[RMDB]
RNA sequence: GGGAACGACUCGAGUAGAGUCGAAAAACCCAGGGAUGACGCAGAGCCGAUUUUAGGGUGCCUAUUGUCCAUGUAAACGAUGUUGAAUAUCUUCAUCACAUACCGGGCAUAACGUUGAGUGAGGCACUUCGGUCUGCCGAUUCGUCGGCAGACCGAAAAAAGAAACAACAACAACAAC
Reactivity to 2A3 in 0.01 (KOAc 150mM, MgCl2 10mM, bicine 150mM(pH8.5), 24C), signal-to-noise 2, nucleotides 027 to 126: a010c000c000c000a000g050g050g000a180u130g000a000c000g010c020a000g000a060g060c010c000g050a050u040u150u060u270a190g000g000g080u000g000c010c000u030a060u080u040g020u030c000c000a020u150g000u180a000a100a000c010g060a000u000g000u000u100g090a190a130u130a210u240c000u020u000c000a000u000c000a020c060a030u030a000c060c060g030g030g010c000a000u000a060a000c130g090u090u260g030a090g040u040g020a020g000g000c000a000c000
Reactivity to DMS in 0.01 (KOAc 150mM, MgCl2 10mM, bicine 150mM(pH8.5), 24C), signal-to-noise 2, nucleotides 027 to 126: a050c000c000c000a160g000g000g000a060u000g000a110c300g000c020a040g000a140g000c020c020g000a090u010u020u010u020a110g000g000g040u010g000c020c010u000a060u000u000g020u000c010c010a100u000g000u010a000a050a070c200g000a000u000g000u000u000g000a230a300u040a200u050c010u000u000c000a000u010c010a120c300a220u020a000c020c300g030g000g040c000a040u010a030a090c150g030u020u000g010a210g000u020g000a020g000g020c000a000c020
This 177-nucleotide RNA was probed chemically with 2A3 and DMS. For DMS the reverse transcriptase was MarathonRT. Source: RMDB libraries RFM100 and RFMREP, as collected in RNAgym. The reactions ran in a buffer of 150 mM KOAc, 10 mM MgCl2 and 150 mM bicine (pH 8.5), at 24 C. For 2A3, 447 sequencing reads were counted.